Overview: This 177-nucleotide RNA was probed chemically with 2A3. For 2A3 the reverse transcriptase was SuperScript II with manganese. The RNA was probed in 150 mM KOAc, 10 mM MgCl2 and 150 mM bicine (pH 8.5) at 24 C. Reactivities are rounded to 0.1 and cut off at 0 and 3.

RNA sequence: GGGAACGACUCGAGUAGAGUCGAAAAUUGCUUUGAUUGAUUCGAUGUCUCCGCUUAAGGCCUUUUCAGACUCUUCAUCAAAGAUGUGCAUGCUGAUGAAUCUGAAUGCAUUCCAGAAUUUUAAGAAAUCGCCGUAGCUGUUCGCAGCUACGGCGAUAAAAGAAACAACAACAACAAC
Reactivity to 2A3 in 0.01 (KOAc 150mM, MgCl2 10mM, bicine 150mM(pH8.5), 24C), signal-to-noise 1, nucleotides 027 to 126: u000u000g000c030u140u060u000g170a030u000u050g100a100u050u050c000g110a050u210g040u000c000u000c060c000g000c050u130u000a020a000g080g000c000c000u110u000u000u000c060a000g000a000c060u000c000u050u020c020a190u000c050a160a000a000g060a240u000g000u000g100c000a020u160g060c000u030g000a260u130g030a020a300u090c000u030g000a000a000u000g140c050a000u000u000c060c000a060g020a080a190u000u000u210u300a220a000g030a130a160